An RNA of 207 nucleotides, treated with 2A3 and DMS and read out base by base.
Conditions: 150 mM KOAc, 10 mM MgCl2 and 150 mM bicine (pH 8.5), 24 C.
Reactivities are given for positions 27 through 156.
DMS adducts were read by reverse transcription with MarathonRT.
[RMDB]
RNA sequence: GGGAACGACUCGAGUAGAGUCGAAAAGCAGGGUCGAAUUCCCAGGCUGAGGCCUGAUUUCUGUAAGGCCUGGCGCAAGUAAGUGGCGUUGAUACUUGAGUCCUGCGCAACGGAGAUUUGCGAACCCCGUCAGGUCCGGAAGGAAGCAGCGGUAAGCGGUCAUUUUAAGGUUCGCCUUAAAAUGACCAAAAGAAACAACAACAACAAC
Reactivity to 2A3 in 0.01 (KOAc 150mM, MgCl2 10mM, bicine 150mM(pH8.5), 24C), signal-to-noise 1, nucleotides 027 to 156: g070c030a020g020g000g050u120c070g050a060a100u040u050c000c010c040a000g030g000c040u030g120a020g030g000c010c000u080g040a090u010u170u000c060u100g120u170a050a040g010g000c000c000u010g010g030c010g010c050a050a040g030u070a050a050g020u060g110g000c080g060u120u140g050a090u050a160c030u030u040g020a000g040u020c030c010u080g010c020g000c010a030a030c000g110g000a050g030a140u090u040u080g020c040g000a130a150c000c020c000c030g030u060c000a010g000g020u020c010c010g090g030a060a050g040g000a040a010g000c010a010g000c040g020g010u030a020a020g080c040
Reactivity to DMS in 0.01 (KOAc 150mM, MgCl2 10mM, bicine 150mM(pH8.5), 24C), signal-to-noise 1, nucleotides 027 to 156: g010c040a000g030g020g010u000c000g000a140a250u020u000c000c000c000a170g010g000c030u020g010a050g020g000c020c080u010g060a080u010u010u000c120u000g000u000a160a070g010g010c040c020u010g030g010c050g000c050a060a020g020u010a070a170g010u010g010g030c030g000u000u030g030a280u010a050c050u010u000g000a140g010u010c010c010u030g000c030g040c070a100a060c030g000g000a120g000a230u000u000u000g010c050g000a130a100c000c040c010c010g000u010c060a170g030g030u000c010c010g110g030a210a130g060g010a070a050g000c030a100g000c090g030g040u000a080a130g030c140